Source information:
An RNA of 177 nucleotides, treated with DMS and 2A3 and read out base by base. For DMS, 4,691 sequencing reads were counted. The 2A3 profile rests on 4,644 reads. For DMS the reverse transcriptase was MarathonRT. Source: RMDB library OK1LIB, as collected in RNAgym. Conditions: 150 mM KOAc, 10 mM MgCl2 and 150 mM bicine (pH 8.5), 24 C.
[RMDB]
RNA sequence: GGGAACGACUCGAGUAGAGUCGAAAACGCCUUACUCAGCUUCCACCUGCCCAGGUAUGUACACAUAUUGUCACCUUGUGGGAUCACUCCUUACAUCCACCCGGUCCCAGAAUGCAAAGAUGAUAUCUCUCAAUAAGCCAUUCGUGGCUUAUUGAGAAAAAGAAACAACAACAACAAC
Reactivity to DMS in 0.01 (KOAc 150mM, MgCl2 10mM, bicine 150mM(pH8.5), 24C), signal-to-noise 3, nucleotides 027 to 126: c170g000c010c010u000u010a050c020u020c080a100g020c080u000u000c050c030a070c110c010u000g000c020c020c020a060g000g000u000a060u010g010u000a110c090a040c110a090u030a070u010u000g000u010c030a110c040c070u010u000g000u010g010g000g000a070u000c050a070c090u000c050c050u000u030a140c140a070u040c000c000a020c060c010c040g010g000u000c000c000c010a060g010a080a060u010g010c100a060a040a060g000a060u000g000a060u000a070u020c060
Reactivity to 2A3 in 0.01 (KOAc 150mM, MgCl2 10mM, bicine 150mM(pH8.5), 24C), signal-to-noise 6, nucleotides 027 to 126: c060g020c010c000u040u050a070c020u030c050a020g020c020u060u040c010c010a050c020c010u050g030c000c010c000a010g050g050u090a080u190g130u100a040c080a000c020a090u100a090u070u140g030u030c010a050c010c020u040u050g050u060g080g030g000a020u040c000a030c070u060c030c000u050u090a080c050a070u030c010c000a020c020c000c020g010g020u020c000c000c010a030g060a040a020u140g030c110a060a060a040g060a020u100g020a010u080a070u110c060